The data come from the RNA Mapping Database (RMDB), library OK1LIB. The record gives the reactivity of an RNA of 177 nucleotides to 2A3 and DMS.
RNA sequence: GGGAACGACUCGAGUAGAGUCGAAAAGCUGACAAAGCAGCGGGAGCGGCCAACGACAAUGCCAGAGCUUUCAACGCUCUUUGCGCAGUAAUUGGCAUAGCGUCUUCUCCGCCUGACGUCGCGACAGGAUCCCAGGACGGUUCGCCGUCCUGGGAUCAAAAGAAACAACAACAACAAC
Reactivity to 2A3 in 0.01 (KOAc 150mM, MgCl2 10mM, bicine 150mM(pH8.5), 24C), signal-to-noise 3, nucleotides 027 to 126: g060c100u090g010a030c070a040a210a040g050c050a000g020c010g000g010g050a020g010c020g030g000c000c000a020a020c050g110a040c060a090a230u060g000c010c000a000g020a000g000c000u100u300u220c130a050a010c150g000c030u030c030u080u070u120g060c120g000c000a020g060u060a050a140u040u060g000g000c070a080u130a040g080c000g120u050c020u110u040c080u060c010c040g080c000c000u030g010a080c130g000u020c000g000c020g010a010c010a000g060
Reactivity to DMS in 0.01 (KOAc 150mM, MgCl2 10mM, bicine 150mM(pH8.5), 24C), signal-to-noise 2, nucleotides 027 to 126: g000c040u060g000a020c170a130a250a100g000c060a080g000c030g020g000g000a090g040c120g000g030c000c040a000a000c300g000a070c050a060a040u000g000c000c230a050g000a060g000c000u000u040u000c300a110a200c260g000c000u000c000u000u000u040g000c230g030c110a080g020u000a050a130u010u000g000g020c000a050u020a060g050c030g000u010c110u010u040c050u000c000c000g000c100c000u000g000a060c260g000u000c000g000c080g090a100c040a190g010
Record summary
Conditions: 150 mM KOAc, 10 mM MgCl2 and 150 mM bicine (pH 8.5), 24 C. Reactivities are given for positions 27 through 126.